[RMDB]
RNA sequence: GGGAACGACUCGAGUAGAGUCGAAAAGAAAGCGACGAUUCGAUCGUAGUCGCAAUGAUCGGGUAAAGAAAAGAAAAGGUGCCAUGGUGACGGCACCGUCACCAUAAGAAAAGUCGAAAGACGAAAACCCUUAUGUAUACUUCGGUAUACAUAAGGGAAAAGAAACAACAACAACAAC
Reactivity to 2A3 in 0.01 (KOAc 150mM, MgCl2 10mM, bicine 150mM(pH8.5), 24C), signal-to-noise 6, nucleotides 027 to 126: g080a020a090a010g060c030g030a020c010g050a110u090u060c020g060a050u030c010g040u050a040g100u060c010g000c020a000a050u090g020a020u020c030g010g020g000u100a090a130a010g110a090a170a040a000g150a010a060a020a020g100g040u050g020c030c030a030u030g010g010u030g010a010c000g040g190c060a020c030c000g000u000c010a000c000c000a020u040a080a030g160a040a090a000a000g000u010c020g020a100a040a010g000a010c040g030a080a020a020a040
Reactivity to DMS in 0.01 (KOAc 150mM, MgCl2 10mM, bicine 150mM(pH8.5), 24C), signal-to-noise 6, nucleotides 027 to 126: g020a090a070a090g000c040g000a040c030g020a130u040u020c060g010a050u000c060g000u010a130g000u000c070g010c080a100a040u010g010a050u010c030g000g000g000u030a080a100a070g020a080a040a100a130g000a040a060a080a070g000g000u020g000c060c070a020u000g000g010u000g020a010c010g020g010c220a070c190c010g000u000c000a020c000c010a020u010a080a080g000a040a080a090a100g000u000c010g000a080a090a090g010a020c020g010a060a060a090a120